[RMDB]
Overview:
Source: RMDB library VIROID, as collected in RNAgym. This 177-nucleotide RNA was probed chemically with 2A3 and DMS. Reactivities are rounded to 0.1 and cut off at 0 and 3. For 2A3 the reverse transcriptase was SuperScript II with manganese.
RNA sequence: GGGAACGACUCGAGUAGAGUCGAAAACGGCCCGAAAGGUUGAGAAGCACCCAGAGGGAGGAAUCCACACGGAGUAGAACAGAGAAAUCACCUCCAGAGGACCCCUUCAGCGAACAGAAGGGCACUGCCAAGUGAGUAAGUUCGCUUACUCACUUGGAAAAGAAACAACAACAACAAC
Reactivity to 2A3 in 0.01 (KOAc 150mM, MgCl2 10mM, bicine 150mM(pH8.5), 24C), signal-to-noise 1, nucleotides 027 to 126: c020g030g020c000c000c000g010a120a080a020g080g010u090u080g150a040g030a140a030g020c070a020c000c010c050a050g000a000g060g000g020a040g050g060a050a130u040c000c030a000c020a020c170g000g040a020g000u190a030g070a110a050c080a020g070a000g040a110a090a110u040c020a020c030c020u010c000c020a030g010a030g080g010a040c020c010c010c040u010u030c010a080g010c030g050a050a010c000a050g040a050a030g030g000g020c010a030c060u060g000
Reactivity to DMS in 0.01 (KOAc 150mM, MgCl2 10mM, bicine 150mM(pH8.5), 24C), signal-to-noise 2, nucleotides 027 to 126: c100g010g030c010c010c010g020a110a150a110g000g010u000u000g010a080g020a100a120g010c090a030c000c030c060a100g010a200g030g000g000a000g000g000a100a130u010c010c010a060c240a240c130g020g000a020g000u000a110g020a030a100c130a100g000a100g000a100a080a070u010c010a210c100c010u000c000c030a030g010a250g010g000a080c280c030c020c010u000u010c030a050g010c100g020a060a040c060a130g000a070a070g000g000g010c180a070c060u000g000
The DMS profile rests on 887 reads. For DMS the reverse transcriptase was MarathonRT.